[RMDB]
Overview: The record gives the reactivity of an RNA of 207 nucleotides to 2A3.
RNA sequence: GGGAACGACUCGAGUAGAGUCGAAAAUUUCAACCGAACAAGCCGAAGUCUUUGCUUAAAUGCGGAGAUUCAGAGACUAAACGAAGAUGGGGACGCCAAAAUAUAGGCGUCUUUUCUGAUAUAGUCCGACUUAUAGCUGGAAGGCUAUAACGUUUGUCCUAUUUGAAGUCUUCGGACUUCAAAUAGGAAAAGAAACAACAACAACAAC
Reactivity to 2A3 in 0.01 (KOAc 150mM, MgCl2 10mM, bicine 150mM(pH8.5), 24C), signal-to-noise 1, nucleotides 027 to 156: u060u180u080c020a030a010c040c010g120a160a060c030a040a060g080c060c050g130a030a050g020u020c000u120u000u040g000c020u080u080a110a110a120u220g000c000g060g000a000g020a030u070u030c050a040g140a030g020a090c030u030a000a060a180c040g040a090a050g020a040u150g000g060g060g000a000c000g000c000c000a060a030a250a000u300a080u170a140g020g000c000g010u000c000u020u020u000u000c000u000g010a010u000a000u000a130g000u060c000c010g010a010c010u010u050a000u000a020g000c000u020g070g140a050a040g100g000c000u000a000u000a000a050c030g040u000u070u120g010u020
Background: The reactions ran in a buffer of 150 mM KOAc, 10 mM MgCl2 and 150 mM bicine (pH 8.5), at 24 C.